[RMDB]
RNA sequence: GGGAACGACUCGAGUAGAGUCGAAAAGACCUGGUGAUACAUCUCCACCUACUGGUUGCUGAGAAAGUGAGUCACAGUCCACUUACUAGGGGUAUUUGGCUUUUGGAGAUGACUACUGGAUGACAUUAACUGUCUUGGGUUGCAGACAGAGGGAACCCGAUAUCGAGUACUUCGGUACUCGAUAUCGAAAAGAAACAACAACAACAAC
Reactivity to DMS in 0.01 (KOAc 150mM, MgCl2 10mM, bicine 150mM(pH8.5), 24C), signal-to-noise 2, nucleotides 027 to 156: g040a130c080c000u000g010g030u000g010a100u000a050c060a110u000c010u000c030c010a080c050c030u010a080c070u010g010g030u000u000g030c000u000g000a150g020a080a060a080g010u000g010a130g000u010c070a110c100a190g030u010c030c030a100c060u000u000a060c090u010a090g000g010g010g020u000a060u010u010u010g050g000c010u000u000u000u000g000g010a110g010a020u000g000a030c070u010a070c050u010g020g040a140u010g010a070c040a080u020u000a070a130c080u000g000u000c030u000u000g020g020g010u000u000g030c010a100g000a080c030a070g040a180g010g000g010a090a080c090c080